[RMDB]
RNA sequence: GGGAACGACUCGAGUAGAGUCGAAAACAUCAGUCGUUCGCGACUGAUGAAACGUGCAAGCGCUGCACGAAAAAGUCGAUCGAAUACCGAUCGACAUGCGCUAAAGAUAGGCCUUCGGGCCUAUCAAGAAACUAGUAGAGUUCGCUCUACUAGUUUCAAAAGAAACAACAACAACAAC
Reactivity to 2A3 in 0.01 (KOAc 150mM, MgCl2 10mM, bicine 150mM(pH8.5), 24C), signal-to-noise 8, nucleotides 027 to 126: c000a000u000c000a000g000u000c000g040u060u100c230g010c010g100a000c000u000g000a000u000g000a010a010a000c000g000u000g000c020a100a100g010c000g010c020u030g000c000a000c040g190a080a010a000a000a000g000u000c000g000a000u000c000g020a100a060u140a300c140c010g000a000u000c000g000a000c000a000u020g000c000g000c000u020a070a030a010g000a000u000a000g000g010c010c030u020u100c240g050g010g000c000c000u010a000u000c000a000a000
Reactivity to DMS in 0.01 (KOAc 150mM, MgCl2 10mM, bicine 150mM(pH8.5), 24C), signal-to-noise 5, nucleotides 027 to 126: c000a000u000c010a010g010u000c000g030u000u010c220g050c000g020a020c010u000g010a010u000g000a040a080a160c010g010u000g000c010a050a040g020c000g020c010u000g000c000a010c010g010a020a050a040a050a060g020u000c000g000a010u000c010g010a250a160u010a160c240c020g010a010u000c010g010a000c000a000u010g000c000g020c010u000a120a120a120g000a020u000a000g000g010c000c000u000u010c190g030g010g010c010c000u000a000u000c000a060a080
The record gives the reactivity of an RNA of 177 nucleotides to 2A3 and DMS.
DMS adducts were read by reverse transcription with MarathonRT.
The reactions ran in a buffer of 150 mM KOAc, 10 mM MgCl2 and 150 mM bicine (pH 8.5), at 24 C.